Chemical mapping of a 177-nucleotide RNA with DMS and 2A3. 2A3 adducts were read by reverse transcription with SuperScript II with manganese. It was measured as part of the RMDB libraries RFM100 and RFMREP. Conditions: 150 mM KOAc, 10 mM MgCl2 and 150 mM bicine (pH 8.5), 24 C.

[RMDB]
RNA sequence: GGGAACGACUCGAGUAGAGUCGAAAAAUCCGAGGUGAACGCUAUGUUUUAACUAUCUAACACGGAGUUGGAGUGAUUUAAAGAUCGCUUUGACGAGCCAACAAUGGAAGAGCCAACACGUGAUUUAACGUACCGGACAAUUCGUUGUCCGGUACGUAAAAGAAACAACAACAACAAC
Reactivity to DMS in 0.01 (KOAc 150mM, MgCl2 10mM, bicine 150mM(pH8.5), 24C), signal-to-noise 2, nucleotides 027 to 126: a050u000c010c020g080a160g000g040u000g010a010a060c150g000c200u020a080u000g000u000u000u000u030a030a060c080u030a060u000c140u000a070a100c000a040c040g010g000a150g010u000u020g000g000a030g000u020g010a160u020u010u000a020a040a020g000a150u000c010g000c000u020u000u000g020a030c040g000a050g000c000c010a050a120c280a100a080u000g000g000a020a020g000a050g000c000c000a000a010c000a000c010g000u000g000a060u000u000u000a020
Reactivity to 2A3 in 0.01 (KOAc 150mM, MgCl2 10mM, bicine 150mM(pH8.5), 24C), signal-to-noise 2, nucleotides 027 to 126: a000u000c010c000g050a100g000g060u100g040a030a000c050g000c090u140a090u210g160u020u100u030u140a020a000c030u050a100u150c030u060a030a010c000a000c060g000g000a080g040u000u000g000g010a020g000u170g080a150u000u050u300a000a040a070g010a190u030c000g000c000u080u080u040g020a030c000g020a010g000c000c010a100a100c130a060a100u130g060g010a030a020g190a000g260c000c000a000a010c000a000c030g000u000g030a070u000u030u060a020